This 177-nucleotide RNA was probed chemically with 2A3 and DMS. Source: RMDB libraries RFM100 and RFMREP, as collected in RNAgym.

RNA sequence: GGGAACGACUCGAGUAGAGUCGAAAAGGGGUGCCAGCUAUGUGAAUAGCUGGUCUCAGUGACUAGGGGGGCCCGACUGUUUAAUAAAAACAUAGCUCUCUGCUAGCCCGUAAGGGUGUGUACAGAGCACUCCUGACAUGUUCGCAUGUCAGGAGUGAAAAGAAACAACAACAACAAC
Reactivity to 2A3 in 0.01 (KOAc 150mM, MgCl2 10mM, bicine 150mM(pH8.5), 24C), signal-to-noise 3, nucleotides 027 to 126: g040g010g020g020u140g040c000c020a000g000c010u000a000u010g130u010g090a200a060u010a000g000c010u000g010g010u000c000u000c000a040g040u040g060a000c060u090a070g000g000g000g000g000g000c010c000c000g030a030c020u020g110u040u060u080a210a190u210a080a120a020a020a000c080a040u100a010g000c020u010c000u000c000u050g010c000u010a020g020c020c000c000g010u030a040a160g030g000g000u010g010u010g000u040a060c020a000g010a000g000
Reactivity to DMS in 0.01 (KOAc 150mM, MgCl2 10mM, bicine 150mM(pH8.5), 24C), signal-to-noise 3, nucleotides 027 to 126: g030g010g020g040u020g010c010c050a020g030c000u010a000u000g010u040g020a220a030u000a000g000c040u020g000g000u020c040u010c020a060g000u020g010a140c080u020a100g030g020g000g000g050g020c050c010c010g000a070c150u010g000u000u000u010a080a110u080a130a130a070a030a020c090a050u000a130g000c010u010c010u000c140u000g030c010u000a300g020c020c010c040g000u090a080a050g000g010g020u000g000u000g010u010a070c040a010g000a010g010